The record gives the reactivity of an RNA of 177 nucleotides to 2A3 and DMS. The 2A3 profile rests on 2,395 reads. The DMS profile rests on 1,858 reads. High DMS reactivity at an A or C suggests that its Watson-Crick edge is free. It was measured as part of the RMDB library OK1LIB.

RNA sequence: GGGAACGACUCGAGUAGAGUCGAAAAUCUUUGCUUGGAAGUAUGACGCCUGCAGUGGUCCAAGCAACAUUAUCUACUUCAAUUUCUGCUGCUGAAAUACUAAGUGCCGGUCUAAUGGAGGGUCAGACAUACCACUGCGGUUCGCCGCAGUGGUAUGAAAAGAAACAACAACAACAAC
Reactivity to 2A3 in 0.01 (KOAc 150mM, MgCl2 10mM, bicine 150mM(pH8.5), 24C), signal-to-noise 5, nucleotides 027 to 126: u000c020u020u030u040g040c010u010u000g000g020a050a020g100u150a130u180g140a080c110g040c030c060u060g010c030a050g050u060g100g010u000c000c010a010a010g080c000a000a000c020a100u180u270a090u070c050u070a070c020u040u070c090a070a110u140u040u000c030u040g020c000u020g010c000u040g040a010a060a010u200a070c100u080a070a020g040u020g040c030c020g050g000u040c030u100a080a130u100g010g010a050g020g030g030u030c030a000g030a080
Reactivity to DMS in 0.01 (KOAc 150mM, MgCl2 10mM, bicine 150mM(pH8.5), 24C), signal-to-noise 1, nucleotides 027 to 126: u080c050u010u000u000g040c010u000u060g000g000a050a050g010u000a040u040g000a100c050g000c020c050u000g040c010a130g000u000g010g000u000c020c020a000a000g030c000a040a040c190a050u020u010a030u010c030u000a000c060u010u000c070a090a080u000u000u010c060u020g010c040u000g020c040u010g000a040a060a000u000a090c110u000a100a090g000u000g000c020c030g000g010u040c060u010a020a080u000g010g000a070g010g000g030u000c120a010g000a170